[RMDB]
RNA sequence: GGGAACGACUCGAGUAGAGUCGAAAAAUAGAUGCUUACCCUCUCACAAAGCAUGAAGAUAUAGAAUACCAGAAUGUAUUCUGGGUCUACUUACAGUAUAUAGAAAAACUGUAUAAAGACCUUACAGCUAAUUAGCAACGUUCGCGUUGCUAAUUAGAAAAGAAACAACAACAACAAC
Reactivity to 2A3 in 0.01 (KOAc 150mM, MgCl2 10mM, bicine 150mM(pH8.5), 24C), signal-to-noise 1, nucleotides 027 to 126: a000u070a040g040a020u030g000c000u030u000a060c000c000c000u000c000u010c010a090c000a060a030a040g020c010a000u030g040a110a020g090a040u090a010u050a210g000a020a000u030a010c050c020a120g120a300a040u080g090u020a010u000u000c010u000g000g010g000u000c010u000a040c050u030u000a000c000a030g020u000a080u000a000u040a260g220a010a160a000a010a010c000u000g010u040a000u030a030a100a000g010a030c000c040u010u100a070c070a030g000
Reactivity to DMS in 0.01 (KOAc 150mM, MgCl2 10mM, bicine 150mM(pH8.5), 24C), signal-to-noise 1, nucleotides 027 to 126: a140u000a080g010a020u000g000c040u030u000a230c010c000c020u000c100u050c070a080c060a090a080a050g010c040a030u020g000a140a080g000a170u000a050u010a030g010a050a030u000a000c000c220a060g020a200a130u010g000u000a000u000u000c010u000g000g000g000u000c000u010a100c240u030u000a000c000a020g010u000a010u000a300u000a070g030a080a100a100a120a030c000u000g010u000a000u000a120a100a060g000a000c000c000u000u000a170c280a060g000